[RMDB]
RNA sequence: GGGAACGACUCGAGUAGAGUCGAAAACGGGUGCUGAGACCCAGAGAUCAGUAGAGAUUUUAGAUCUCGCUCCUCAGCAAGGGGGAGUGCUUGCCCGGCAAGCAAGUACUCGAAUUGCUACCGGGGAGACGUAAAUACGUUUCGACGUAUUUACGUCAAAAGAAACAACAACAACAAC
Reactivity to DMS in 0.01 (KOAc 150mM, MgCl2 10mM, bicine 150mM(pH8.5), 24C), signal-to-noise 6, nucleotides 027 to 126: c060g000g000g010u000g010c010u010g010a020g000a030c010c000c010a060g000a010g000a250u000c010a030g010u000a070g020a050g000a060u000u010u010u010a120g000a030u000c000u000c000g000c060u000c030c000u000c040a050g010c060a050a060g010g010g000g000g010a030g010u000g010c020u000u000g000c010c000c020g000g010c190a130a280g000c000a010a000g010u000a020c050u000c070g010a200a070u000u000g000c010u000a170c160c060g010g000g010g020a120
Reactivity to 2A3 in 0.01 (KOAc 150mM, MgCl2 10mM, bicine 150mM(pH8.5), 24C), signal-to-noise 5, nucleotides 027 to 126: c010g000g000g020u120g000c010u020g000a010g010a050c010c010c040a020g000a000g000a020u010c020a000g040u140a070g020a010g010a040u020u060u100u300a240g040a080u010c000u000c010g000c010u000c000c000u020c030a010g000c010a020a020g030g000g000g010g000a010g000u010g020c010u020u040g020c000c040c000g160g070c100a040a000g000c000a000a000g010u020a030c010u010c020g010a020a020u030u020g000c010u040a060c050c070g000g000g010g000a100

This 177-nucleotide RNA was probed chemically with DMS and 2A3. DMS adducts were read by reverse transcription with MarathonRT. High 2A3 reactivity points to a flexible backbone, as in loops and unpaired stretches. Reactivities are given for positions 27 through 126. The 2A3 profile rests on 15,463 reads.